[RMDB]
RNA sequence: GGGAACGACUCGAGUAGAGUCGAAAACUUGCCAUGGUUUCCUGCUCCACCACGUCGAUGGUCGGGCGCUCAUAGGCGGAAAUGGUCUUGCGGCCAUAUUCCACGGCGAUCUGCGGCAGGGAGCCGAUAAUAUACCUGACUUCGGUCAGGUAUAUUAAAAAGAAACAACAACAACAAC
Reactivity to DMS in 0.01 (KOAc 150mM, MgCl2 10mM, bicine 150mM(pH8.5), 24C), signal-to-noise 7, nucleotides 027 to 126: c180u000u010g020c060c040a110u020g010g020u000u000u000c000c010u010g010c010u010c190c060a040c060c040a070c040g010u010c170g000a120u000g010g010u000c150g010g000g010c020g020c030u000c170a120u010a090g030g020c060g030g000a030a040a040u000g010g010u000c010u000u010g010c300g010g000c000c000a020u000a090u010u000c000c000a060c030g000g000c010g010a080u000c090u000g010c300g000g010c010a040g010g000g000a020g020c000c010g000a060
Reactivity to 2A3 in 0.01 (KOAc 150mM, MgCl2 10mM, bicine 150mM(pH8.5), 24C), signal-to-noise 6, nucleotides 027 to 126: c020u050u170g060c040c030a160u150g020g000u010u000u000c000c000u010g020c010u050c050c020a040c000c020a050c030g180u090c050g160a300u020g030g000u000c040g020g030g010c010g010c010u080c020a220u210a110g100g000c090g050g050a050a070a040u090g030g010u030c030u050u220g050c170g020g030c000c000a020u050a200u090u010c010c000a010c010g000g000c010g010a110u030c020u100g020c030g020g000c000a000g000g000g000a010g010c000c000g000a000

This 177-nucleotide RNA was probed chemically with DMS and 2A3.
For 2A3 the reverse transcriptase was SuperScript II with manganese.
Values are in units of 0.01, from 0 to 300, in steps of 10.
It was measured as part of the RMDB library OK2TST.
DMS adducts were read by reverse transcription with MarathonRT.